[RMDB]
RNA sequence: GGGAACGACUCGAGUAGAGUCGAAAAGAGGCAACAAUUAACCCGUAUCGGCUCGCGGUGCAGCAGUGUGGAGACCUGUUGUAAUACCUUCGUCACAUAUGCGGGCGUCGGUGAGCUGCGCAGUUAGCUCAAUCUCAUUAUUCGUAAUGAGAUUGAGAAAAGAAACAACAACAACAAC
Reactivity to DMS in 0.01 (KOAc 150mM, MgCl2 10mM, bicine 150mM(pH8.5), 24C), signal-to-noise 9, nucleotides 027 to 126: g010a140g010g010c090a060a060c080a070a110u020u010a110a120c060c030c020g000u020a080u010c070g010g010c010u000c030g020c040g010g010u010g020c010a100g000c010a020g010u010g010u000g010g010a110g000a060c170c040u010g010u000u010g010u010a090a110u020a060c040c060u000u000c020g010u000c010a030c040a100u010a200u010g000c070g000g010g000c010g020u000c060g020g000u000g010a080g010c020u000g010c110g010c120a050g000u000u010a090g010
Reactivity to 2A3 in 0.01 (KOAc 150mM, MgCl2 10mM, bicine 150mM(pH8.5), 24C), signal-to-noise 9, nucleotides 027 to 126: g110a020g040g070c050a070a030c020a070a120u160u140a100a070c020c000c010g030u070a100u150c050g020g000c010u000c010g000c020g010g020u040g000c010a010g000c010a010g010u030g020u070g190g060a050g050a060c010c020u020g020u030u020g030u040a080a080u080a110c000c000u010u020c010g030u030c020a020c030a090u280a120u210g070c180g040g060g000c000g010u000c010g020g030u050g020a020g000c010u020g010c030g000c020a040g020u060u110a020g020

Structure probing data (DMS and 2A3) for a 177-nucleotide construct. Reactivities are given for positions 27 through 126. It was measured as part of the RMDB libraries RFM100 and RFMREP.